RNA sequence: GGGAACGACUCGAGUAGAGUCGAAAAACGCAUUACUGUGUAUGGGGCAGGGCGUGCUCAAACACUACCGACGUCGUGAAGAUGCACCUGCCAUGUUGCGUAGUGAACGCUUGCCUGAUCCUCCUGCCGGCACGACCCGUUUCGACGGGUCGUGCCGAAAAGAAACAACAACAACAAC
Reactivity to 2A3 in 0.01 (KOAc 150mM, MgCl2 10mM, bicine 150mM(pH8.5), 24C), signal-to-noise 1, nucleotides 027 to 126: a000c060g020c050a080u040u100a230c000u060g020u000g020u200a020u280g100g010g030g000c000a000g150g140g000c070g070u000g010c000u110c050a020a050a030c000a000c000u000a060c080c060g100a050c080g010u060c050g000u050g080a170a020g000a000u180g090c160a160c060c150u040g000c000c000a020u040g000u000u000g080c100g000u020a000g000u000g060a000a000c060g000c000u000u060g000c010c000u090g050a040u040c000c000u000c000c020u030g000c000